[RMDB]
RNA sequence: GGGAACGACUCGAGUAGAGUCGAAAACUUUCACAAGAUCUUUAUGAAGGAUGGCCGCUCACUAGUUGUUCCAUGUAGAAACCAGGAUGAACUGAUAGGGAGAGCCAGAAUCUCGCAGGGAGCUGGAUGUAUGGAGGAGUUUCGACUCCUCCAUACAAAAAGAAACAACAACAACAAC
Reactivity to DMS in 0.01 (KOAc 150mM, MgCl2 10mM, bicine 150mM(pH8.5), 24C), signal-to-noise 1, nucleotides 027 to 126: c030u010u010u000c070a030c080a080a050g050a120u000c080u020u010u010a080u030g020a070a010g000g010a140u000g000g000c270c030g050c040u000c010a060c050u000a020g010u010u000g010u000u000c000c020a100u020g030u000a100g010a090a100a070c080c040a070g010g010a120u010g000a120a060c070u000g010a070u020a070g010g000g000a080g030a130g000c090c090a030g000a110a060u010c020u000c060g080c050a090g000g010g000a060g030c030u000g020g020a160